[RMDB]
RNA sequence: GGGAACGACUCGAGUAGAGUCGAAAAUUAAAGAAUUGUCGUUGGGAUGCUACGCAAUUAAAUACAUGUGUGUCGUGUAUUUGCGAACGACGUAAUUCAAUAGCAGAAAGAUCAAAAGAUCAAAAAACCAUGUAUUCCUCUUCGGAGGAAUACAUGGAAAAGAAACAACAACAACAAC
Reactivity to 2A3 in 0.01 (KOAc 150mM, MgCl2 10mM, bicine 150mM(pH8.5), 24C), signal-to-noise 2, nucleotides 027 to 126: u110u010a130a050a030g020a040a050u040u020g070u080c000g000u000u010g030g100g030a080u150g030c000u040a030c020g000c000a010a080u150u160a100a100a000u040a010c010a030u060g090u020g100u050g220u180c020g000u000g000u020a010u000u080u040g010c000g000a010a000c010g000a000c010g000u030a020a020u070u020c030a060a070u040a030g040c020a000g160a170a210a010g000a030u000c010a010a300a230a110g000a010u010c000a040a040a090a000a040a070
Reactivity to DMS in 0.01 (KOAc 150mM, MgCl2 10mM, bicine 150mM(pH8.5), 24C), signal-to-noise 1, nucleotides 027 to 126: u020u000a080a050a230g000a030a030u000u000g020u010c000g020u000u000g010g020g010a120u000g030c120u010a150c090g000c020a090a060u000u040a020a010a040u010a030c000a010u000g030u000g030u000g000u010c050g040u000g000u010a030u010u000u000g020c050g000a040a050c000g010a020c010g000u000a000a050u000u000c050a050a150u000a010g000c090a020g000a110a070a160g000a020u000c010a080a020a140a160g020a000u020c010a000a070a030a040a080a100

Source information
Structure probing data (2A3 and DMS) for a 177-nucleotide construct. The 2A3 profile rests on 1,199 reads. For DMS, 1,047 sequencing reads were counted. Reactivities are rounded to 0.1 and cut off at 0 and 3. For DMS the reverse transcriptase was MarathonRT.